[RMDB]
RNA sequence: GGGAACGACUCGAGUAGAGUCGAAAAUCAAUAUCGGGUCCUCGGCUCGUUCUAGGGCGGUGCUGGAAUAGCGCAGGGAGUAGAAGCCGGUAACCGGCGCGUACACCUCAGGAUUGGGAUAGACCCGUCAUUCGGUGAGCUUCGGCUCACCGAAUGAAAAAGAAACAACAACAACAAC
Reactivity to DMS in 0.01 (KOAc 150mM, MgCl2 10mM, bicine 150mM(pH8.5), 24C), signal-to-noise 1, nucleotides 027 to 126: u060c280a130a040u050a040u000c010g020g000g020u010c000c010u000c120g000g050c100u010c020g020u040u000c060u000a110g000g000g030c040g000g000u000g050c040u000g000g010a070a120u090a110g030c070g000c010a100g000g010g010a140g080u000a080g010a070a300g020c000c030g010g070u000a090a150c090c000g020g000c030g000c180g030u010a070c060a100c010c000u000c000a090g000g000a050u000u000g050g000g000a150u010a160g000a170c070c010c010g000
Reactivity to 2A3 in 0.01 (KOAc 150mM, MgCl2 10mM, bicine 150mM(pH8.5), 24C), signal-to-noise 1, nucleotides 027 to 126: u100c000a000a160u170a080u090c000g000g020g000u000c000c000u010c000g090g020c000u000c000g070u000u000c090u260a060g000g020g000c060g050g000u000g000c020u000g000g040a300a150u150a020g000c040g010c000a020g040g100g000a160g010u000a000g120a050a030g020c010c010g000g000u060a160a180c090c000g000g010c090g040c040g000u000a080c030a100c050c000u000c120a000g010g010a010u080u100g090g000g000a060u070a150g000a040c000c000c000g000

Notes:
Source: RMDB library OK1LIB, as collected in RNAgym. This 177-nucleotide RNA was probed chemically with DMS and 2A3. The 2A3 profile rests on 443 reads. Reactivities are given for positions 27 through 126. The RNA was probed in 150 mM KOAc, 10 mM MgCl2 and 150 mM bicine (pH 8.5) at 24 C.